[RMDB]
RNA sequence: GGGAACGACUCGAGUAGAGUCGAAAAUACACUUUACGUGUGCUGGUUUCAUUACUUUGUCCCAAACCAGGCACGCGUAAUUAAAGCCCAGUUUGGCCAGGUCCGCGUUAUCGAUGGUCACCAAUAACCUAGAAGGUAAAUUCGUUUACCUUCUAGGAAAAGAAACAACAACAACAAC
Reactivity to 2A3 in 0.01 (KOAc 150mM, MgCl2 10mM, bicine 150mM(pH8.5), 24C), signal-to-noise 8, nucleotides 027 to 126: u090a000c030a020c050u020u020u010a000c000g010u000g000u010g000c000u000g000g030u040u040u070c090a110u090u200a140c120u210u150u230g090u120c030c010c010a000a000a000c030c010a050g150g000c000a000c000g000c000g000u000a000a010u040u080a100a040a030g010c000c000c010a020g040u040u110u080g030g000c020c020a030g000g050u040c040c050g060c070g070u070u050a110u110c030g040a070u060g010g020u030c010a010c030c020a080a100u100a070a040
Reactivity to DMS in 0.01 (KOAc 150mM, MgCl2 10mM, bicine 150mM(pH8.5), 24C), signal-to-noise 9, nucleotides 027 to 126: u010a120c170a140c150u010u000u000a000c010g020u000g020u000g010c000u000g000g000u000u000u010c120a090u000u010a090c170u010u000u000g000u000c020c030c030a060a030a010c000c000a040g020g010c000a010c000g020c000g010u000a000a010u000u010a060a100a140g000c010c000c010a130g010u000u000u000g000g010c040c030a060g010g010u010c040c070g000c090g010u010u000a050u000c050g000a080u000g010g010u000c020a080c190c100a070a090u010a080a170
About this RNA:
An RNA of 177 nucleotides, treated with 2A3 and DMS and read out base by base. The RNA was probed in 150 mM KOAc, 10 mM MgCl2 and 150 mM bicine (pH 8.5) at 24 C. Source: RMDB library M2PK90, as collected in RNAgym. For 2A3, 16,177 sequencing reads were counted.